This 177-nucleotide RNA was probed chemically with 2A3 and DMS.
For DMS, 1,127 sequencing reads were counted.
For DMS the reverse transcriptase was MarathonRT.
For 2A3 the reverse transcriptase was SuperScript II with manganese.
Conditions: 150 mM KOAc, 10 mM MgCl2 and 150 mM bicine (pH 8.5), 24 C.

[RMDB]
RNA sequence: GGGAACGACUCGAGUAGAGUCGAAAAGAGCUUGCCUUCUUUGCAAAUGCUUUGGAAGAAGUCUCUAUUGAGACAAUUGAGGCUGGCUUCAUGACCAAGGACUUGGCUGCUUGCAUUAAAGGUUUACGUAACGUACGGUGUUCGCACCGUACGUUACAAAAGAAACAACAACAACAAC
Reactivity to 2A3 in 0.01 (KOAc 150mM, MgCl2 10mM, bicine 150mM(pH8.5), 24C), signal-to-noise 1, nucleotides 027 to 126: g100a010g010c030u040u030g070c020c000u040u030c020u070u030u040g030c010a060a150a160u110g000c020u120u080u210g060g000a030a060g020a040a010g050u000c010u030c000u080a230u030u260g050a210g020a030c050a090a040u000u080g020a000g000g000c010u010g010g050c000u000u040c060a090u040g040a050c010c010a020a030g060g020a060c040u010u040g030g010c010u000g020c010u080u000g000c020a020u090u130a080a100a080g010g080u040u080u130a050c080
Reactivity to DMS in 0.01 (KOAc 150mM, MgCl2 10mM, bicine 150mM(pH8.5), 24C), signal-to-noise 2, nucleotides 027 to 126: g000a100g030c070u000u000g020c020c020u000u000c050u000u000u000g000c020a090a050a140u000g010c050u000u020u010g020g030a090a070g020a190a030g010u000c020u000c000u000a130u000u020g000a210g010a100c040a040a060u000u000g000a010g020g010c020u000g010g020c020u000u000c050a100u000g000a210c080c010a060a070g010g000a090c150u000u000g000g010c030u060g020c050u000u000g010c020a100u000u000a020a020a030g030g000u020u000u000a060c200